[RMDB]
RNA sequence: GGGAACGACUCGAGUAGAGUCGAAAAGAUAUGGAUUGACGGGAGCGUGUACUCGGAAACGAGUACCACGCGAGGAUCGUCACGGUCCUAAGUCGGAACCGCAUCUAAGUUCGCUUAGAUGCGGUAAUGGGUGUGACAUCUUCGGAUGUCACACCCAAAAAGAAACAACAACAACAAC
Reactivity to DMS in 0.01 (KOAc 150mM, MgCl2 10mM, bicine 150mM(pH8.5), 24C), signal-to-noise 2, nucleotides 027 to 126: g040a020u000a070u000g000g000a090u000u000g000a000c000g010g020g000a030g000c000g020u020g000u000a000c000u010c000g050g000a000a010a040c000g050a000g000u010a000c300c130a000c010g000c000g000a060g010g000a060u000c000g000u020c020a000c300g010g000u000c000c020u000a000a070g000u000c010g000g020a250a010c000c000g000c000a060u000c000u000a000a000g020u000u000c240g000c000u000u000a010g000a000u010g030c000g000g000u000a000a060

Chemical mapping of a 177-nucleotide RNA with DMS.
Source: RMDB library TTRDEL, as collected in RNAgym.
Conditions: 150 mM KOAc, 10 mM MgCl2 and 150 mM bicine (pH 8.5), 24 C.